[RMDB]
Structure probing data (2A3 and DMS) for a 177-nucleotide construct. High DMS reactivity at an A or C suggests that its Watson-Crick edge is free. Source: RMDB library VIROID, as collected in RNAgym. The reactions ran in a buffer of 150 mM KOAc, 10 mM MgCl2 and 150 mM bicine (pH 8.5), at 24 C. Values cover nucleotides 27 to 126. The DMS profile rests on 874 reads.
RNA sequence: GGGAACGACUCGAGUAGAGUCGAAAACGGAGAGCAGCACAGAUCAACAAAAGCGGCUCUGGGGUAGAAGCUUCAGUUGUAUCCACCGGGUAGUAGCCAGAGAGAAGCACCGGGCGAGGGGUGGCGAGCACCGUUAUAAGUUCGCUUAUAACGGUGCAAAAGAAACAACAACAACAAC
Reactivity to 2A3 in 0.01 (KOAc 150mM, MgCl2 10mM, bicine 150mM(pH8.5), 24C), signal-to-noise 1, nucleotides 027 to 126: c020g000g030a020g030a020g050c050a020g010c050a070c040a090g080a140u140c030a020a150c010a080a240a030a050g000c020g030g010c000u040c020u030g050g020g000g000u070a050g030a210a020g020c000u040u070c050a110g040u160u080g070u170a100u070c030c080a040c110c070g000g050g000u040a110g020u040a000g060c010c030a040g010a010g010a000g010a110a010g020c020a010c020c000g000g050g010c100g040a040g000g030g040g020u060g020g000c000g000a030
Reactivity to DMS in 0.01 (KOAc 150mM, MgCl2 10mM, bicine 150mM(pH8.5), 24C), signal-to-noise 1, nucleotides 027 to 126: c140g010g020a110g030a050g030c020a020g030c020a100c090a080g000a130u010c100a090a140c060a050a070a110a180g000c030g040g000c010u000c020u000g010g020g000g010u020a040g000a090a150g000c030u000u000c050a040g030u010u000g000u000a140u010c040c050a090c050c070g010g000g040u000a060g040u010a050g040c080c010a070g000a090g000a120g000a030a040g000c050a090c080c080g020g010g020c120g010a030g010g010g030g020u000g020g000c100g010a120